[RMDB]
RNA sequence: GGGAACGACUCGAGUAGAGUCGAAAAGUCAGAAAACAUGACAAGUUUGGACUGGCAAAUCGAGCAUGUGGUACACGCAUCAUCCAGACCAACCUGCUCUUCCACGGUCAUACGUGGCCGACGCCGUUUCCUGCGCGGUUUAGCACCAGCAUCGUCGGCACAUGAUUUAAUUCGUUAAAUCAUGUGCAAAAGAAACAACAACAACAAC
Reactivity to 2A3 in 0.01 (KOAc 150mM, MgCl2 10mM, bicine 150mM(pH8.5), 24C), signal-to-noise 9, nucleotides 027 to 156: g000u010c010a000g090a080a180a040a060c080a120u080g030a030c040a070a040g020u020u060u070g040g020a040c010u010g010g010c080a070a060a110u170c110g020a030g030c070a060u050g010u050g070g110u220a080c110a030c140g030c010a110u050c010a020u030c050c010a010g060a060c010c000a010a040c000c020u030g010c000u010c010u090u020c020c010a020c010g020g010u070c050a050u080a150c090g040u020g010g000c000c000g050a070c050g000c020c000g010u000u040u030c000c010u030g000c040g010c050g030g020u040u050u140a030g020c020a010c030c000a010g030c010a040u090c070g110u030c030g030
Reactivity to DMS in 0.01 (KOAc 150mM, MgCl2 10mM, bicine 150mM(pH8.5), 24C), signal-to-noise 4, nucleotides 027 to 156: g010u000c000a090g000a060a060a060a100c080a130u010g010a080c060a080a060g000u000u010u010g010g010a080c010u000g000g000c070a070a100a090u000c110g000a140g030c030a040u000g060u000g020g020u000a300c060a100c050g010c050a100u010c050a170u010c030c020a100g010a060c020c030a050a080c040c030u030g010c000u000c030u000u000c000c010a070c140g000g010u000c140a090u000a100c170g020u000g010g010c070c000g000a170c080g030c020c020g000u000u000u000c010c020u000g020c040g000c030g010g020u010u000u000a150g010c040a090c010c010a110g000c010a140u000c030g020u010c060g000